[RMDB]
RNA sequence: GGGAACGACUCGAGUAGAGUCGAAAAGUCAUUAACGCGUGUGCACUCUCUAACACGAAUUACCCAGUUAUUUUCGACUUUACUCGACUCGUUAUAGCGUGAUAUGAGAGAGUAAUCCGCGACCAAACGUUCAAGACGAAUUCGUUCGUCUUGAACGAAAAGAAACAACAACAACAAC
Reactivity to DMS in 0.01 (KOAc 150mM, MgCl2 10mM, bicine 150mM(pH8.5), 24C), signal-to-noise 1, nucleotides 027 to 126: g060u020c200a150u000u010a010a020c050g000c020g060u000g030u000g000c080a050c020u000c020u000c000u030a210a010c030a000c000g010a190a100u020u000a070c050c100c050a140g000u010u000a030u000u000u000u000c010g000a000c000u000u000u000a000c010u000c000g000a020c040u000c000g000u000u000a060u000a040g000c020g000u020g000a010u020a130u010g020a070g010a070g000a080g000u000a150a040u000c020c000g000c000g000a150c050c020a040a080a110
Reactivity to 2A3 in 0.01 (KOAc 150mM, MgCl2 10mM, bicine 150mM(pH8.5), 24C), signal-to-noise 2, nucleotides 027 to 126: g080u060c070a220u100u170a080a010c060g000c000g140u000g000u020g000c040a040c080u010c000u010c000u000a020a010c000a000c010g080a100a160u150u110a130c050c040c010a010g000u050u060a110u020u000u000u000c000g000a000c010u000u000u000a000c010u020c010g000a010c000u010c000g020u000u030a080u150a030g000c020g020u190g070a000u000a080u200g040a050g000a000g010a000g010u010a000a050u030c000c000g000c020g000a020c000c000a000a100a050
This 177-nucleotide RNA was probed chemically with DMS and 2A3.
Values are in units of 0.01, from 0 to 300, in steps of 10.
Values cover nucleotides 27 to 126.
The data come from the RNA Mapping Database (RMDB), library M2PK90.
The reactions ran in a buffer of 150 mM KOAc, 10 mM MgCl2 and 150 mM bicine (pH 8.5), at 24 C.
For 2A3 the reverse transcriptase was SuperScript II with manganese.